[RMDB]
RNA sequence: GGGAACGACUCGAGUAGAGUCGAAAAUUAGAUUUGAUUUGAGAUCUUGAGUCACCAGGCAGUCCCAAUUUUUUUUACGAAAUAUUAGGAGUGUGCUGAUGUCAGCAUAGAUGAUGUAUUAUACAUGCUUAUACUUGAUCUUCGGAUCAAGUAUAAGAAAAGAAACAACAACAACAAC
Reactivity to 2A3 in 0.01 (KOAc 150mM, MgCl2 10mM, bicine 150mM(pH8.5), 24C), signal-to-noise 3, nucleotides 027 to 126: u080u020a050g130a180u060u030u170g040a040u060u050u110g060a120g000a030u040c010u000u010g010a000g010u010c020a010c030c010a010g080g000c010a000g120u000c000c000c000a000a010u000u030u030u000u000u010u050u120a030c030g010a030a040a030u130a050u110u070a020g050g030a060g060u040g000u030g050c010u030g010a080u130g140u150c010a010g000c010a040u030a070g060a050u130g020a010u040g020u060a090u230u090a060u060a040c040a060u050g040
Reactivity to DMS in 0.01 (KOAc 150mM, MgCl2 10mM, bicine 150mM(pH8.5), 24C), signal-to-noise 4, nucleotides 027 to 126: u010u000a070g000a130u000u000u010g000a100u000u010u000g010a180g010a070u000c000u000u000g010a100g010u000c000a050c030c010a030g010g000c010a020g010u000c000c000c020a030a000u000u000u000u010u000u000u010u020a160c140g000a020a020a020u000a020u000u000a060g000g010a030g010u000g010u000g010c000u000g000a120u010g010u000c030a070g030c060a050u000a060g010a070u000g010a050u000g010u010a060u000u000a110u000a040c070a060u000g000

Structure probing data (2A3 and DMS) for a 177-nucleotide construct. The RNA was probed in 150 mM KOAc, 10 mM MgCl2 and 150 mM bicine (pH 8.5) at 24 C. The DMS profile rests on 5,474 reads.